[RMDB]
The record gives the reactivity of an RNA of 177 nucleotides to 2A3 and DMS. Values cover nucleotides 27 to 126. Source: RMDB libraries RFM100 and RFMREP, as collected in RNAgym.
RNA sequence: GGGAACGACUCGAGUAGAGUCGAAAAACGAGCUACUACGGUAGCUCGAGUUCUUACAAUGUUCAGUUUAGUGUCAGUUAACUUUAACCGGACAUUGUGAGAACGGAGCGUCGGUACGCCGACGCAAAUACUCUGUGUACUUCGGUACACAGAGUAUAAAAGAAACAACAACAACAAC
Reactivity to 2A3 in 0.01 (KOAc 150mM, MgCl2 10mM, bicine 150mM(pH8.5), 24C), signal-to-noise 9, nucleotides 027 to 126: a000c020g000a000g020c000u010a000c000u010a020c150g120g000u000a000g000c000u000c000g000a010g000u000u000c000u000u000a000c000a000a000u000g000u000u000c020a020g010u000u020u040a070g020u040g150u120c170a190g120u170u210a070a020c010u080u100u050a020a010c010c010g000g000a000c000a000u000u000g000u000g000a000g000a000a000c000g030g040a090g000c000g000u010c010g020g020u050a040c230g030c050c000g000a000c000g000c000a010a010
Reactivity to DMS in 0.01 (KOAc 150mM, MgCl2 10mM, bicine 150mM(pH8.5), 24C), signal-to-noise 4, nucleotides 027 to 126: a190c020g000a010g020c000u000a000c010u010a120c180g040g000u000a000g000c000u010c000g000a050g000u000u000c000u000u010a010c000a010a000u000g010u000u010c010a030g010u000u000u000a010g010u000g010u030c250a180g010u030u040a090a030c010u000u020u000a010a010c000c040g010g000a010c000a000u000u000g000u000g000a000g000a010a000c000g010g010a120g000c010g000u010c010g000g010u010a130c280g020c010c000g000a000c000g010c010a010a040